[RMDB]
RNA sequence: GGGAACGACUCGAGUAGAGUCGAAAAACAAAUUAUCUAAGUCUAAGACCUUGUUUCAAACUAACAAGGGCGCAUGGAGGAAGACCAGACCUCCAUACUUAGACAACCGCGAACCGGCCAAAAAAAAUGACAUGAUUAGAUUCGUCUAAUCAUGUCAAAAAGAAACAACAACAACAAC
Reactivity to 2A3 in 0.01 (KOAc 150mM, MgCl2 10mM, bicine 150mM(pH8.5), 24C), signal-to-noise 1, nucleotides 027 to 126: a000c070a020a080a010u250u140a080u090c050u200a140a030g000u000c010u020a010a000g040a020c000c000u000u010g110u000u080u130c280a280a220a120c160u060a010a010c010a000a000g000g010g000c020g060c050a000u010g020g000a000g000g050a050a030g060a200c070c000a000g040a140c000c010u000c000c010a020u000a040c000u020u020a020g000a030c000a000a030c020c020g090c020g030a030a000c000c030g020g000c010c000a050a120a030a000a020a000a010a080
Reactivity to DMS in 0.01 (KOAc 150mM, MgCl2 10mM, bicine 150mM(pH8.5), 24C), signal-to-noise 1, nucleotides 027 to 126: a060c040a180a080a070u000u010a060u000c050u000a100a040g030u000c040u020a050a060g000a110c030c000u010u010g000u010u000u020c190a150a100a140c220u020a010a020c000a000a000g000g000g010c200g000c180a000u000g000g000a030g020g000a100a030g050a200c150c120a130g010a130c000c000u010c000c000a000u000a050c020u010u000a020g010a040c010a080a100c120c030g010c040g000a050a130c110c000g020g000c080c000a010a000a010a050a050a080a060a130

Source information: An RNA of 177 nucleotides, treated with 2A3 and DMS and read out base by base. The DMS profile rests on 697 reads. It was measured as part of the RMDB library M2PK90. 2A3 adducts were read by reverse transcription with SuperScript II with manganese. The reactions ran in a buffer of 150 mM KOAc, 10 mM MgCl2 and 150 mM bicine (pH 8.5), at 24 C. Values cover nucleotides 27 to 126.